The record gives the reactivity of an RNA of 177 nucleotides to 2A3 and DMS.
The reactions ran in a buffer of 150 mM KOAc, 10 mM MgCl2 and 150 mM bicine (pH 8.5), at 24 C.
RNA sequence: GGGAACGACUCGAGUAGAGUCGAAAACGGGUCGCAUUGGUUCUGGAAGCUGCCUCUGGUCGUGGUUGGCUCGGUGGUCGGCGCGCUACUUCUCGACCGAGAAGUUCGGAGCAUCUACCGAUGCGUGGCUAAACAUGUGGUUCGCCACAUGUUUAGCAAAAGAAACAACAACAACAAC
Reactivity to 2A3 in 0.01 (KOAc 150mM, MgCl2 10mM, bicine 150mM(pH8.5), 24C), signal-to-noise 2, nucleotides 027 to 126: c020g000g030g120u030c010g000c000a030u020u050g030g000u090u070c050u080g060g040a080a030g030c020u060g060c020c020u060c050u060g070g020u070c040g030u060g100g060u100u130g040g000c040u010c100g000g010u060g020g070u100c040g050g000c020g000c010g010c010u010a010c000u040u000c000u010c030g190a270c130c050g010a010g000a030a010g020u030u090c060g050g010a020g030c010a020u000c030u090a070c000c040g020a010u020g020c000g020u030g030
Reactivity to DMS in 0.01 (KOAc 150mM, MgCl2 10mM, bicine 150mM(pH8.5), 24C), signal-to-noise 3, nucleotides 027 to 126: c080g000g000g020u000c030g010c040a050u000u000g000g010u010u020c090u030g020g020a070a140g010c010u000g010c030c010u000c060u010g010g010u000c050g030u000g010g000u010u000g010g010c030u000c080g010g010u000g000g010u000c020g030g000c040g010c090g020c060u000a050c020u000u020c000u000c010g000a190c260c200g000a010g020a070a030g000u000u010c080g020g000a130g020c020a080u000c030u000a080c070c030g000a010u000g010c010g020u000g020